[RMDB]
RNA sequence: GGGAACGACUCGAGUAGAGUCGAAAAGAUAUGGACGUAACUCCCCACCGUAGCCCACUCUUUGAUCACUGUUCUAUCGGAAACGAUAGAACAGUGGGAGAGUGGCUACGAGGUUACGUCCUAAGUCGAGAGAGUAGUGGUUCGCCACUACUCUCUCAAAAGAAACAACAACAACAAC
Reactivity to 2A3 in 0.01 (KOAc 150mM, MgCl2 10mM, bicine 150mM(pH8.5), 24C), signal-to-noise 1, nucleotides 027 to 126: g180a140u300a260u300g000g000a000c000g010u000a000a000c000u300c080c000c000c000a000c040c020g010u000a000g060c060c110c010a020c020u020c000u250u170u150g180a130u240c010a000c000u000g000u010u030c000u000a000u000c010g060g040a080a090a080c000g000a000u000a020g010a000a000c000a000g010u000g020g000g000a010g000a000g000u020g000g010c000u000a000c000g020a000g060g000u000u000a000c030g010u030c000c000u000a030a000g300u250c140
Reactivity to DMS in 0.01 (KOAc 150mM, MgCl2 10mM, bicine 150mM(pH8.5), 24C), signal-to-noise 1, nucleotides 027 to 126: g030a230u020a170u020g010g060a000c010g010u000a000a010c000u000c160c070c000c120a300c150c000g000u000a000g020c170c000c030a000c020u010c000u020u000u030g010a090u050c000a000c000u000g000u000u000c000u000a000u000c000g000g000a180a070a300c000g000a000u000a000g010a000a000c000a020g010u000g020g000g030a010g000a020g000u000g000g000c000u000a000c000g030a050g100g000u000u000a000c000g030u000c010c000u000a020a100g020u000c200
This 177-nucleotide RNA was probed chemically with 2A3 and DMS. The DMS profile rests on 798 reads. For DMS the reverse transcriptase was MarathonRT. The 2A3 profile rests on 2,071 reads.